Structure probing data (2A3 and DMS) for a 177-nucleotide construct. The reactions ran in a buffer of 150 mM KOAc, 10 mM MgCl2 and 150 mM bicine (pH 8.5), at 24 C. Source: RMDB library RFM100, as collected in RNAgym.
RNA sequence: GGGAACGACUCGAGUAGAGUCGAAAAUUUUACACUGCUGCACUGAGGGCACAUGCAUCUUUAGUGGGACUUGGAAUUCUGGAGAGUUGUCUUUAUGAAAAACUGGUUAUAAUUUUCUUUAAAUCCCUAUACUGCGAAGUUUCGACUUCGCAGUAUAAAAAGAAACAACAACAACAAC
Reactivity to 2A3 in 0.01 (KOAc 150mM, MgCl2 10mM, bicine 150mM(pH8.5), 24C), signal-to-noise 3, nucleotides 027 to 126: u020u020u000u030a060c080a010c010u080g020c020u050g010c040a030c060u030g020a060g030g030g050c020a040c010a080u110g030c010a110u000c050u040u090u060a100g030u100g030g050g030a020c000u000u100g040g030a070a110u090u000c020u040g010g010a030g010a010g040u020u140g020u050c010u040u100u060a110u060g060a060a050a050a020a040c040u060g000g000u010u020a060u020a190a030u030u050u000u000c030u000u090u020a020a120a080u010c000c000c000
Reactivity to DMS in 0.01 (KOAc 150mM, MgCl2 10mM, bicine 150mM(pH8.5), 24C), signal-to-noise 2, nucleotides 027 to 126: u040u040u010u020a080c040a050c070u020g000c020u000g000c010a010c080u040g000a070g020g000g000c030a050c080a130u060g000c050a060u000c050u000u030u020a080g010u010g010g000g010a060c050u040u030g000g000a150a060u010u000c050u030g000g000a090g000a040g030u000u020g010u010c020u010u020u000a020u070g000a070a020a060a110a130c100u000g000g040u000u020a050u030a040a030u000u010u000u010c010u020u020u000a000a090a170u030c030c000c020